[RMDB]
Background:
An RNA of 177 nucleotides, treated with 2A3 and DMS and read out base by base. DMS (dimethyl sulfate) methylates the pairing face of unpaired adenines and cytosines. As a SHAPE reagent, 2A3 marks flexible, mostly unpaired nucleotides at the ribose 2'-OH. For DMS, 4,485 sequencing reads were counted. Source: RMDB library OK1LIB, as collected in RNAgym. Conditions: 150 mM KOAc, 10 mM MgCl2 and 150 mM bicine (pH 8.5), 24 C. DMS adducts were read by reverse transcription with MarathonRT.

RNA sequence: GGGAACGACUCGAGUAGAGUCGAAAACACGUAGGAAUCACUAACUUGAUAUUCCUUGAGUACAAUCCGAAGGAAUCCUGCUGACUGGCGAUGAAAAUGCAGCUCAUACAAAGUUGGUGCACAUAUGCAUUAGCACCGUCUUCGGACGGUGCUAAUGAAAAGAAACAACAACAACAAC
Reactivity to 2A3 in 0.01 (KOAc 150mM, MgCl2 10mM, bicine 150mM(pH8.5), 24C), signal-to-noise 5, nucleotides 027 to 126: c070a020c020g110u090a070g010g220a030a060u080c010a020c020u030a100a020c010u040u040g070a040u040a070u180u000c000c000u010u010g050a030g100u100a050c080a100a130u080c060c050g070a020a000g010g010a020a000u030c010c020u050g030c040u040g080a160c020u040g030g120c040g110a110u100g110a080a090a030a010u090g010c000a020g000c030u020c070a100u170a140c070a050a070a000g000u000u020g000g000u040g080c050a020c020a130u240a050u230g030
Reactivity to DMS in 0.01 (KOAc 150mM, MgCl2 10mM, bicine 150mM(pH8.5), 24C), signal-to-noise 4, nucleotides 027 to 126: c010a080c100g020u050a020g000g030a130a030u020c060a020c060u000a050a090c100u030u010g000a100u010a070u000u000c000c000u000u010g040a060g060u020a110c190a070a090u000c060c080g040a070a030g010g000a060a020u020c070c020u030g020c020u020g010a140c110u000g030g010c050g050a120u010g010a020a030a130a100u030g030c090a010g000c090u020c130a060u010a060c240a070a080a030g040u010u000g000g010u010g010c120a100c100a180u000a010u020g000